RNA sequence: GGGAACGACUCGAGUAGAGUCGAAAACAGCUUGAAUCGUUCGCGAUUCAAGCUGAAAAAAAGGAUUUAGGGUUUUCAGAUUCUGGUAGCCAGUCAAAAUCGCUUCUACUCUUCGGAGUAGAAGCGACCAUAAUGGUAUCUUCGGAUACCAUUAUGGAAAAGAAACAACAACAACAAC
Reactivity to DMS in 0.01 (KOAc 150mM, MgCl2 10mM, bicine 150mM(pH8.5), 24C), signal-to-noise 2, nucleotides 027 to 126: c000a010g020c010u000u000g000a010a040u000c010g030u000u020c210g030c010g000a020u000u000c000a000a010g020c010u000g000a010a010a030a090a080a100a070g000g000a030u000u000u000a080g020g020g010u010u010u000u010c090a060g000a120u000u000c030u000g010g010u020a080g000c020c010a110g000u020c180a040a020a150a190u000c000g010c000u000u000c000u000a000c000u000c000u000u010c210g010g020a020g000u000a000g000a010a000g020c000g010a010
Reactivity to 2A3 in 0.01 (KOAc 150mM, MgCl2 10mM, bicine 150mM(pH8.5), 24C), signal-to-noise 2, nucleotides 027 to 126: c000a010g040c000u010u020g010a000a000u000c020g010u070u090c200g040c010g110a010u000u000c010a000a000g020c000u010g000a000a000a000a000a000a000a000g060g010a070u090u080u140a100g000g040g030u100u030u040u100c050a040g120a270u160u040c030u110g050g000u040a010g040c040c020a000g060u090c040a000a010a010a130u030c000g000c000u010u000c000u020a000c010u010c010u000u070c220g110g010a000g000u010a010g000a000a020g000c000g010a000
The record gives the reactivity of an RNA of 177 nucleotides to DMS and 2A3. The 2A3 profile rests on 1,997 reads. Reactivities are given for positions 27 through 126.